[RMDB]
RNA sequence: GGGAACGACUCGAGUAGAGUCGAAAAGGUAAACACCGUGCGGUUCCUCAGGUUCGCCACGCCAACGCAGCUACAUAUAGAAAACGAAUUGAAGAAUGAAUUCCCAUGUCGUCGUCGACGAAGGCCGGUAACCGUAUACCUUCGGGUAUACGGUUACAAAAGAAACAACAACAACAAC
Reactivity to DMS in 0.01 (KOAc 150mM, MgCl2 10mM, bicine 150mM(pH8.5), 24C), signal-to-noise 1, nucleotides 027 to 126: g000g000u000a090a130a070c060a070c010c020g010u010g000c010g020g010u000u000c050c020u000c080a140g000g000u010u000c070g000c020c060a060c110g000c010c010a060a000c140g020c020a080g000c060u000a070c070a060u000a100u020a070g000a090a030a080a080c050g000a070a100u010u010g000a040a110g010a050a090u000g000a100a090u000u000c010c000c030a150u020g000u000c010g010u000c020g000u000c090g020a050c050g020a070a030g000g040c000c160g010
Reactivity to 2A3 in 0.01 (KOAc 150mM, MgCl2 10mM, bicine 150mM(pH8.5), 24C), signal-to-noise 1, nucleotides 027 to 126: g010g040u060a080a110a000c030a020c040c040g020u090g010c040g010g060u040u020c010c020u020c010a030g050g020u040u060c050g060c020c040a090c040g000c020c000a160a000c030g010c030a040g040c010u060a020c040a040u270a020u010a100g080a030a180a000a010c040g040a060a060u140u130g060a050a010g080a050a040u060g030a040a080u040u000c060c040c000a000u080g040u000c030g000u010c060g030u010c040g020a050c030g020a080a000g030g010c040c050g100
This 177-nucleotide RNA was probed chemically with DMS and 2A3. 2A3 adducts were read by reverse transcription with SuperScript II with manganese. Values cover nucleotides 27 to 126.